[RMDB]
RNA sequence: GGGAACGACUCGAGUAGAGUCGAAAACUGCAACGGCCUGCGAGCUCCCCAUCCGACCCGUCUUGAAACACGGACCAAGGAGUCUGACAUGCGUGCGAGUCGACGGGUUCUGAAACCUGGGAUGCGCCUACAACGUAACCUUCGGGUUACGUUGUAGAAAAGAAACAACAACAACAAC
Reactivity to DMS in 0.01 (KOAc 150mM, MgCl2 10mM, bicine 150mM(pH8.5), 24C), signal-to-noise 1, nucleotides 027 to 126: c050u000g030c060a060a090c070g000g000c030c040u020g020c020g000a030g010c020u010c010c000c010c080a070u000c030c150g000a040c020c000c000g000u020c020u000u020g010a150a160a150c050a060c020g020g020a070c070c050a110a110g020g020a110g000u020c020u000g020a070c120a190u000g020c050g000u000g030c010g000a180g010u000c050g000a070c000g000g000g020u000u000c020u020g010a080a130a060c200c100u000g000g000g000a090u020g020c060g010c120
Chemical mapping of a 177-nucleotide RNA with DMS. The reactions ran in a buffer of 150 mM KOAc, 10 mM MgCl2 and 150 mM bicine (pH 8.5), at 24 C. It was measured as part of the RMDB library RFMREP.